[RMDB]
RNA sequence: GGGAACGACUCGAGUAGAGUCGAAAAGAUAUGGACCUAGGAGUAAAGACAACAGCGGUAGUCGGAAACGACUACCGACAUGUCUGCUCUAGGUCCUAAGUCAAAUCGGACAGGUUCGCCUGUCCGAGGUGGACAUUGAGUUCGCUCAAUGUCCACCAAAAGAAACAACAACAACAAC
Reactivity to 2A3 in 0.01 (KOAc 150mM, MgCl2 10mM, bicine 150mM(pH8.5), 24C), signal-to-noise 2, nucleotides 027 to 126: g000a000u070a040u190g020g000a010c000c010u050a110g020g300a080g160u200a300a300a120g040a030c030a120a050c040a250g050c010g010g010u010a000g000u000c010g060g000a060a070a060c010g010a000c020u000a000c020c000g000a000c020a000u030g010u070c010u030g010c010u000c010u030a000g050g010u000c000c010u020a030a010g000u010c040a020a070a140u010c010g000g020a000c000a010g000g110u140u160c300g090c040c010u000g000u000c000c000g000a020
Reactivity to DMS in 0.01 (KOAc 150mM, MgCl2 10mM, bicine 150mM(pH8.5), 24C), signal-to-noise 2, nucleotides 027 to 126: g000a030u000a300u000g000g000a000c000c000u030a000g030g000a030g020u000a060a130a150g000a030c010a030a040c280a130g000c010g000g010u010a000g010u000c010g020g010a180a080a240c010g000a000c000u000a020c000c010g010a000c060a190u000g000u010c020u000g000c020u000c000u000a000g000g000u010c000c000u000a000a100g000u010c010a180a060a220u010c010g000g000a010c020a000g010g010u000u040c290g010c020c000u020g000u010c000c000g010a000
The record gives the reactivity of an RNA of 177 nucleotides to 2A3 and DMS. Source: RMDB library TTRDES, as collected in RNAgym. The reactions ran in a buffer of 150 mM KOAc, 10 mM MgCl2 and 150 mM bicine (pH 8.5), at 24 C.